An RNA of 177 nucleotides, treated with DMS and 2A3 and read out base by base. The reactions ran in a buffer of 150 mM KOAc, 10 mM MgCl2 and 150 mM bicine (pH 8.5), at 24 C. Source: RMDB library OK2TST, as collected in RNAgym.

RNA sequence: GGGAACGACUCGAGUAGAGUCGAAAAAGCUCUGCACACAGGCUGGAGGAAGGUAGGGUGGAGGCCCUGAGCUCAUCCUGGUGGGGAGAGACAGCUCAGGCAGGCCUUGGUGGUCAGGCCUACUGGCCGGCGUAAAAUGGUUCGCCAUUUUACGCCGAAAAGAAACAACAACAACAAC
Reactivity to DMS in 0.01 (KOAc 150mM, MgCl2 10mM, bicine 150mM(pH8.5), 24C), signal-to-noise 3, nucleotides 027 to 126: a080g000c030u000c020u000g010c070a090c080a100c100a080g010g000c030u000g010g000a090g010g000a110a040g010g020u000a090g000g010g030u010g020g010a080g000g010c100c010c010u000g000a080g010c010u000c070a150u000c020c000u010g020g020u010g010g000g000g000a100g010a080g010a100c260a050g000c000u010c010a010g000g020c300a050g000g020c020c000u000u010g020g020u020g000g000u000c080a050g000g000c020c040u000a070c060u020g010g010c150
Reactivity to 2A3 in 0.01 (KOAc 150mM, MgCl2 10mM, bicine 150mM(pH8.5), 24C), signal-to-noise 2, nucleotides 027 to 126: a000g040c060u020c040u110g060c050a050c010a010c010a060g060g000c060u060g070g060a060g040g040a110a040g050g050u190a050g030g000g050u090g050g070a080g010g080c020c030c000u010g030a020g000c010u010c030a050u020c020c020u040g080g040u120g030g020g000g030a070g000a020g010a060c060a040g000c010u020c060a010g010g000c020a000g040g000c000c010u020u060g040g020u050g020g000u030c000a010g000g050c010c000u050a070c040u010g000g000c030